The record gives the reactivity of an RNA of 177 nucleotides to DMS and 2A3. The RNA was probed in 150 mM KOAc, 10 mM MgCl2 and 150 mM bicine (pH 8.5) at 24 C. For DMS the reverse transcriptase was MarathonRT. It was measured as part of the RMDB libraries RFM100 and RFMREP. Reactivities are given for positions 27 through 126. For 2A3 the reverse transcriptase was SuperScript II with manganese.
RNA sequence: GGGAACGACUCGAGUAGAGUCGAAAAGUGAACGCGCCCCUGGUGAAUCAGUGAUGCUAAGCGCCCUGAAGCCGCCUUCGAACCUUCGGGUUCUCCGGUGUGUGGAUGCGCGUGAACCGAUCUGGUAUAUACAACUAGUCUUCGGACUAGUUGUAUAAAAAGAAACAACAACAACAAC
Reactivity to DMS in 0.01 (KOAc 150mM, MgCl2 10mM, bicine 150mM(pH8.5), 24C), signal-to-noise 9, nucleotides 027 to 126: g020u010g000a100a100c080g010c090g000c040c000c020c040u000g020g020u010g000a140a030u010c010a010g000u010g000a300u030g000c010u000a080a300g000c020g000c000c070c020u000g000a300a160g000c010c000g000c010c000u000u020c300g000a010a010c000c000u000u040c180g020g010g010u000u000c010u000c300c220g000g000u000g000u040g020u000g000g000a100u000g000c300g000c010g000u000g000a060a100c300c000g000a130u000c000u010g000g010u010a130
Reactivity to 2A3 in 0.01 (KOAc 150mM, MgCl2 10mM, bicine 150mM(pH8.5), 24C), signal-to-noise 6, nucleotides 027 to 126: g100u090g080a160a020c070g040c020g050c030c010c000c020u070g040g050u110g120a040a020u020c000a000g010u020g020a010u020g000c010u010a020a010g000c000g000c010c030c000u010g010a010a000g000c000c000g000c010c000u010u040c020g000a000a000c000c000u040u050c170g080g000g000u000u000c000u010c010c010g030g010u040g040u110g000u020g010g000a000u010g020c020g000c000g010u000g000a000a000c000c000g000a010u010c000u000g000g020u010a020